[RMDB]
RNA sequence: GGGAACGACUCGAGUAGAGUCGAAAAGCGCAAACGUCGGUAGCUUAAGAUGCCAACGAAUAGCCGCCAGCCGAAUCAAUAGCGUCACGACCAUGCCCAUCAUACUGGCUGUUUCCAGUGGUACGGAGUUGUUUUUCCAUUUCGAUGGAAAAACAACAAAAGAAACAACAACAACAAC
Reactivity to 2A3 in 0.01 (KOAc 150mM, MgCl2 10mM, bicine 150mM(pH8.5), 24C), signal-to-noise 3, nucleotides 027 to 126: g040c040g020c000a040a030a090c030g020u020c030g010g070u040a030g030c050u150u140a100a030g050a090u070g000c000c020a020a010c040g070a090a080u060a080g050c030c000g000c030c000a020g060c030c020g070a030a050u070c050a060a140u060a100g070c030g060u040c030a010c090g030a020c040c020a020u090g010c000c020c000a050u060c010a030u070a140c020u020g060g040c030u050g080u050u060u020c010c000a000g000u020g060g030u110a060c050g030g050a100
Reactivity to DMS in 0.01 (KOAc 150mM, MgCl2 10mM, bicine 150mM(pH8.5), 24C), signal-to-noise 4, nucleotides 027 to 126: g020c060g010c040a070a080a130c060g030u000c040g010g040u000a040g010c050u010u020a110a140g000a070u000g000c010c020a030a040c050g010a080a090u000a140g030c040c030g010c020c030a070g000c040c040g010a090a070u000c070a070a060u020a060g000c040g000u000c030a060c060g010a060c050c040a050u000g000c010c010c030a070u000c090a070u010a070c060u000g010g000c120u000g000u000u000u000c030c020a060g020u000g000g030u010a060c130g010g010a150